RNA sequence: GGGAACGACUCGAGUAGAGUCGAAAAGAUAUGGACCUCAGGGAGCAACCGCUGACCGCAGAGGAGAUCGGAAACGAUCUCUACCCACCUGUGGGUCAGCGGUUGCGAAGAACUGAGGUCCUAAGUCGCAUGUAGUGUGGUUCGCCACACUACAUGCAAAAGAAACAACAACAACAAC
Reactivity to DMS in 0.01 (KOAc 150mM, MgCl2 10mM, bicine 150mM(pH8.5), 24C), signal-to-noise 1, nucleotides 027 to 126: g000a040u010a300u000g010g040a010c010c000u010c020a010g010g050g000a180g000c000a000a000c000c000g000c020u000g000a020c030c010g010c000a000g010a180g040g000a000g020a010u000c000g010g020a100a140a170c000g000a010u000c000u000c000u000a090c180c030c130a300c080c000u000g000u000g000g000g020u000c000a050g000c000g000g000u000u030g000c000g010a080a060g000a140a210c000u000g010a010g070g000u020c000c030u010a010a080g000u000c110
This 177-nucleotide RNA was probed chemically with DMS.
For DMS the reverse transcriptase was MarathonRT.